[RMDB]
RNA sequence: GGGAACGACUCGAGUAGAGUCGAAAAGAUAUGGAGACAACGCCAGCAGAGCGAUGUGAGGAGGAGAUCGGAAACGAUCUCUCCCCACCCUUAACAUCGCGACGAAGCUGGCGUUGUCUCCUAAGUCGCUACAUAAACAGUUCGCUGUUUAUGUAGCAAAAGAAACAACAACAACAAC
Reactivity to DMS in 0.01 (KOAc 150mM, MgCl2 10mM, bicine 150mM(pH8.5), 24C), signal-to-noise 3, nucleotides 027 to 126: g000a080u010a240u010g000g000a030g010a010c010a010a000c010g010c010c010a030g040c000a150g010a130g000c000g020a020u000g010u010g000a030g010g000a160g010g000a010g010a000u000c000g010g010a110a070a190c010g010a010u000c010u010c000u010c090c020c010c030a300c150c020c000u000u000a090a030c010a020u000c000g000c000g000a150c280g010a080a130g000c010u000g000g000c000g000u000u000g000u010c000u000c000c000u000a000a060g010u000c070

Structure probing data (DMS) for a 177-nucleotide construct. Values are in units of 0.01, from 0 to 300, in steps of 10. Conditions: 150 mM KOAc, 10 mM MgCl2 and 150 mM bicine (pH 8.5), 24 C. Source: RMDB library TTRINS, as collected in RNAgym.